[RMDB]
RNA sequence: GGGAACGACUCGAGUAGAGUCGAAAAAGAGGCGAUACGUCGCCUCAAGCUUGGUGCUUAGCUUCUUUCACCAAGCAUAUUACACGCGGAUAACCGCCAAAGGAGAAACACUGACUACGGUAAGUGAGGAAGUUGGUUCGGUUCGCCGAACCAACAAGAGGACAUAAAUCUUCGGAUUUAUGUCCUCAAAAGAAACAACAACAACAAC
Reactivity to DMS in 0.01 (KOAc 150mM, MgCl2 10mM, bicine 150mM(pH8.5), 24C), signal-to-noise 1, nucleotides 027 to 156: a070g010a030g020g000c000g000a100u000a110c210g050u000c000g000c010c000u000c010a010a060g020c010u010u000g010g010u000g000c070u010u010a020g000c050u000u000c020u000u030u000c010a030c020c010a040a070g010c020a060u010a030u010u010a130c100a070c020g030c050g010g020a240u010a140a130c030c010g000c010c130a020a150a090g000g000a100g030a140a060a120c020a130c020u010g000a070c020u000a090c170g030g000u000a060a010g000u000g000a090g020g030a090a120g000u000u000g020g000u000u000c000g010g030u010u040c300g000c000c000g010a000a010c000c000a000a010c010a000a090
Reactivity to 2A3 in 0.01 (KOAc 150mM, MgCl2 10mM, bicine 150mM(pH8.5), 24C), signal-to-noise 4, nucleotides 027 to 156: a000g010a000g000g010c000g000a010u030a070c180g070u030c010g030c000c000u000c000a000a000g000c000u010u000g000g010u020g010c050u040u010a050g040c010u070u030c020u030u010u010c010a000c000c000a010a000g000c000a000u060a020u050u140a050c050a010c050g020c010g000g040a120u110a300a210c020c010g010c030c030a040a060a000g020g010a040g050a020a120a010c030a010c030u050g090a020c030u060a000c110g090g000u040a040a020g010u030g050a040g060g060a150a070g000u000u000g000g010u000u000c010g000g010u050u030c130g020c060c000g000a000a000c000c000a000a000c000a000a010